[RMDB]
Description:
Chemical mapping of a 207-nucleotide RNA with 2A3.
RNA sequence: GGGAACGACUCGAGUAGAGUCGAAAAGAGAGUGAACGUUCUCACUCGAGAGUGUACGAACGUUCGAACACACACGUGUGAGAGUGAGAUCGUACGAUCUCGUGUGAACACGAUCUCACUCACACUCUCACACACACGUACUCUCACACGUGUGUACGAUGAUUACCGUGUUCGCACGGUAAUCAUCAAAAGAAACAACAACAACAAC
Reactivity to 2A3 in 0.01 (KOAc 150mM, MgCl2 10mM, bicine 150mM(pH8.5), 24C), signal-to-noise 2, nucleotides 027 to 156: g050a000g010a010g020u170g020a020a000c000g010u010u000c020u000c020a000c020u060c070g070a130g000a010g090u050g020u150a080c130g000a000a000c010g000u070u030c060g000a180a010c050a000c000a000c000a000c000g000u000g000u010g000a000g000a000g000u060g010a030g010a020u050c050g070u260a140c190g030a050u010c030u030c040g040u060g010u040g070a070a030c050a020c150g060a060u020c030u020c030a030c010u100c020a030c020a000c020u010c000u000c000a050c000a000c000a010c010a010c150g060u090a060c000u010c000u000c000a000c000a000c000g000u000g000u000g000u030a030c090
It was measured as part of the RMDB library OK3TST.